[RMDB]
RNA sequence: GGGAACGACUCGAGUAGAGUCGAAAAGAAGAGAGCGUAGCACACACUCAGACUGUACGACAGUCUGACACACACCUACGCUAGUGCAACGUGUGUGUGAUAUCGAUGUUGCACGAAGAUGAGGAAAGCUUGUAUUAAUCUUCGGAUUAAUACAAGCAAAAGAAACAACAACAACAAC
Reactivity to 2A3 in 0.01 (KOAc 150mM, MgCl2 10mM, bicine 150mM(pH8.5), 24C), signal-to-noise 9, nucleotides 027 to 126: g170a070a020g120a000g020a010g010c020g000u020a000g020c180a020c010a000c000a000c060u010c000a000g000a000c000u020g020u150a130c140g150a050c230a000g000u000c000u000g010a000c000a000c000a000c010a010c040c010u020a010c000g010c010u040a030g010u010g000c000a010a000c020g010u050g020u030g000u000g020u040g140a070u060a040u260c020g010a010u040g000u010u000g000c010a000c010g000a020a010g040a070u170g040a050g100g000a100a060a030
Reactivity to DMS in 0.01 (KOAc 150mM, MgCl2 10mM, bicine 150mM(pH8.5), 24C), signal-to-noise 9, nucleotides 027 to 126: g000a140a100g000a110g000a070g010c010g010u000a030g010c070a070c090a120c100a090c220u000c010a010g010a020c000u000g010u010a140c290g010a130c010a000g000u000c000u010g010a010c070a030c110a100c120a080c270c030u000a010c020g010c010u000a070g020u000g010c020a010a020c030g020u000g010u010g050u000g000u010g010a170u010a100u010c040g010a040u000g000u000u000g010c010a010c010g010a050a070g000a080u010g000a100g010g010a100a090a120
Record summary: The record gives the reactivity of an RNA of 177 nucleotides to 2A3 and DMS. The RNA was probed in 150 mM KOAc, 10 mM MgCl2 and 150 mM bicine (pH 8.5) at 24 C. Source: RMDB library M2PK90, as collected in RNAgym. For 2A3 the reverse transcriptase was SuperScript II with manganese.